Chemical mapping of a 177-nucleotide RNA with 2A3. For 2A3, 423 sequencing reads were counted. Source: RMDB library OK1LIB, as collected in RNAgym. For 2A3 the reverse transcriptase was SuperScript II with manganese. The reactions ran in a buffer of 150 mM KOAc, 10 mM MgCl2 and 150 mM bicine (pH 8.5), at 24 C.
[RMDB]
RNA sequence: GGGAACGACUCGAGUAGAGUCGAAAAGCGGCCGUUGUGACGUUGCUGAUGCCAACCUCCCGGUUUCGGUCGAAGAUCUCGGCUCGGGCACGCUUGAACAUUGUGACGGCUAGUGACAAAUGCAGCGCCUUACGCAACGCUUCGGCGUUGCGUAAGGAAAAGAAACAACAACAACAAC
Reactivity to 2A3 in 0.01 (KOAc 150mM, MgCl2 10mM, bicine 150mM(pH8.5), 24C), signal-to-noise 1, nucleotides 027 to 126: g200c080g000g030c020c030g000u080u020g080u050g000a060c000g030u020u060g040c020u020g090a270u030g000c000c000a000a000c020c000u130c020c000c000g010g020u120u160u130c020g000g000u020c000g000a000a010g040a250u030c040u010c100g020g000c040u060c150g050g050g000c060a050c220g010c040u030u100g090a060a000c000a170u030u110g030u010g140a000c000g010g010c140u000a050g090u020g060a120c090a000a020a000u130g040c000a000g000c000g000